[RMDB]
The record gives the reactivity of an RNA of 177 nucleotides to DMS and 2A3. 2A3 adducts were read by reverse transcription with SuperScript II with manganese. DMS adducts were read by reverse transcription with MarathonRT.
RNA sequence: GGGAACGACUCGAGUAGAGUCGAAAAGUGCUGAGUGAAAUUCAUAGGUGCCUCGCCAAUUUGGCGGAACGACCCGGUACUCCGCGUAGUCGCGAAGUAAACGUUCGGUGUUGGCGUUCAGGCCUCACCGUAUAAAUUAGUUCGCUAAUUUAUACGGAAAAGAAACAACAACAACAAC
Reactivity to DMS in 0.01 (KOAc 150mM, MgCl2 10mM, bicine 150mM(pH8.5), 24C), signal-to-noise 8, nucleotides 027 to 126: g020u010g010c030u000g000a150g020u020g000a060a100a100u020u010c060a080u020a130g010g010u000g010c030c050u000c020g010c020c000a080a120u010u030u020g020g010c020g000g010a040a040c070g010a110c030c020c040g000g010u010a010c020u000c030c010g000c020g000u030a130g010u040c010g010c010g000a030a020g010u010a020a060a130c090g010u010u000c030g000g020u000g000u010u000g010g010c090g000u010u020c170a060g010g010c010c010u010c060a200
Reactivity to 2A3 in 0.01 (KOAc 150mM, MgCl2 10mM, bicine 150mM(pH8.5), 24C), signal-to-noise 4, nucleotides 027 to 126: g100u080g030c050u030g040a070g030u090g070a090a110a110u180u090c040a040u080a130g050g030u040g040c000c000u010c000g000c000c010a050a090u130u080u250g300g130c040g010g000a010a010c020g030a050c000c020c000g010g010u020a010c000u000c010c000g020c010g050u110a070g120u170c020g000c000g010a020a000g000u030a040a060a020c010g030u030u030c030g020g000u050g000u060u000g000g000c000g000u070u110c050a010g080g000c010c000u030c010a040